[RMDB]
RNA sequence: GGGAACGACUCGAGUAGAGUCGAAAACUUUAAUCAUUUUUGAUGAAUCAAUACGGUAUUUUUGUCGCUUCCUUAUUACAGUAAUGCAGACAUUAACUUCUGAGCGGAAGGAACCGUGUGUUCAGUUGUCUUCUCCGAUCUUCGGAUCGGAGAAGACAAAAGAAACAACAACAACAAC
Reactivity to 2A3 in 0.01 (KOAc 150mM, MgCl2 10mM, bicine 150mM(pH8.5), 24C), signal-to-noise 1, nucleotides 027 to 126: c010u040u100u070a080a040u020c080a200u060u040u080u180u100g200a120u000g000a000a230u060c150a230a120u050a010c000g020g110u110a300u000u000u000u000u000g000u000c020g000c000u000u050c000c020u100u070a140u200u290a170c070a000g000u050a000a000u190g010c050a020g060a000c000a000u070u000a020a000c000u000u000c010u020g160a050g130c150g030g000a000a000g000g000a000a000c000c000g000u000g050u000g000u010u020c030a050g070u000u000